[RMDB]
RNA sequence: GGGAACGACUCGAGUAGAGUCGAAAAAGUAUCUAAUUCGUUAGAUACUCGGGGACGGGUGAGGCGGCCGUGUGCGCAGACAGUGCUCGAGCCGCGCGCGCGAAUUUCGCCUAUUCGUAGGCGAAAAGCAUAUCGGAACGUUCGCGUUCCGAUAUGCAAAAGAAACAACAACAACAAC
Reactivity to DMS in 0.01 (KOAc 150mM, MgCl2 10mM, bicine 150mM(pH8.5), 24C), signal-to-noise 1, nucleotides 027 to 126: a010g020u000a000u010c000u000a000a010u000u000c210g000u010u000a010g000a040u000a000c000u000c160g000g010g030g000a120c060g000g020g020u000g000a100g000g020c050g000g000c010c010g000u010g090u000g010c030g020c110a120g000a060c230a070g010u000g000c010u000c030g010a110g000c000c010g020c030g000c060g010c060g020c030g000a090a080u010u010u000c000g010c000c000u020a010u000u010c170g010u000a020g020g020c000g000a000a000a070a070
This 177-nucleotide RNA was probed chemically with DMS.
The reactions ran in a buffer of 150 mM KOAc, 10 mM MgCl2 and 150 mM bicine (pH 8.5), at 24 C.
The DMS profile rests on 1,001 reads.